[RMDB]
RNA sequence: GGGAACGACUCGAGUAGAGUCGAAAAUUAAAUAAUCGGGCGCCCGCUGGCUUUGAGAGGGCGUGCCUUUGGGAUAUGGUGAGCCCGUUUCCUUCUCGUUAUCCCGACCGGAACCAUAGGCGAAAAACAUUAUUAUGAUGUUCGCAUCAUAAUAAUGAAAAGAAACAACAACAACAAC
Reactivity to 2A3 in 0.01 (KOAc 150mM, MgCl2 10mM, bicine 150mM(pH8.5), 24C), signal-to-noise 3, nucleotides 027 to 126: u040u010a060a020a120u120a060a060u130c040g000g060g020c050g000c040c030c010g050c090u080g110g130c060u250u220u270g070a080g010a080g000g000g000c020g000u020g050c010c000u010u010u120g050g000g020a060u060a040u210g080g030u060g070a040g010c020c000c000g000u030u060u010c000c000u030u040c020u010c010g050u050u030a040u090c010c000c000g000a040c010c030g030g030a010a020c010c010a050u050a070g020g030c010g000a080a060a000a010a000
Reactivity to DMS in 0.01 (KOAc 150mM, MgCl2 10mM, bicine 150mM(pH8.5), 24C), signal-to-noise 5, nucleotides 027 to 126: u010u010a050a110a100u010a070a080u010c080g010g010g030c030g030c010c020c030g030c040u000g010g000c110u000u000u010g010a040g010a050g000g010g010c050g030u000g010c000c010u000u000u010g010g000g010a100u010a060u010g000g010u010g010a100g010c030c000c020g010u000u000u000c010c010u000u000c020u000c100g010u010u000a090u000c020c000c020g000a080c060c060g010g000a070a100c040c030a040u000a060g010g010c020g010a040a070a060a080a150